[RMDB]
RNA sequence: GGGAACGACUCGAGUAGAGUCGAAAAGAUAUGGACCACCAAGGCUCCAUGCCGUUGAAAUCGGAAACGAUGGAGGCAUGGAAGCCGACGUGGUCCUAAGUCAAACUGGACGGUUCGCCGUCCAGAAGUGUCAUCUAAAGUUCGCUUUAGAUGACACAAAAGAAACAACAACAACAAC
Reactivity to 2A3 in 0.01 (KOAc 150mM, MgCl2 10mM, bicine 150mM(pH8.5), 24C), signal-to-noise 3, nucleotides 027 to 126: g020a000u060a030u140g000g000a000c000c000a000c010c030a040a040g010g000c000u020c010c000a000u010g010c000c000g130u210u050g010a030a030a000u010c010g000g060a130a030a030c030g010a000u010g000g050a000g010g000c010a000u010g000g000a000a000g000c000c010g000a010c000g010u000g000g000u000c000c000u000a000a000g010u000c010a000a020a060c010u010g000g000a000c000g000g060u040u070c300g030c120c000g000u000c000c010a000g000a010a000
Reactivity to DMS in 0.01 (KOAc 150mM, MgCl2 10mM, bicine 150mM(pH8.5), 24C), signal-to-noise 5, nucleotides 027 to 126: g000a050u010a300u000g000g010a010c000c000a000c010c010a080a300g000g020c000u000c010c010a000u000g010c000c000g000u000u020g010a070a120a010u000c000g000g000a140a090a150c010g000a010u000g010g010a090g010g000c010a000u000g000g000a030a030g020c010c000g020a110c300g000u000g010g000u000c000c010u000a000a040g010u000c020a090a130a160c000u000g010g000a030c000g010g010u010u010c210g010c000c010g010u000c000c000a010g000a030a070
The data come from the RNA Mapping Database (RMDB), library TTRDEL. The record gives the reactivity of an RNA of 177 nucleotides to 2A3 and DMS. 2A3 adducts were read by reverse transcription with SuperScript II with manganese. For DMS the reverse transcriptase was MarathonRT. The RNA was probed in 150 mM KOAc, 10 mM MgCl2 and 150 mM bicine (pH 8.5) at 24 C.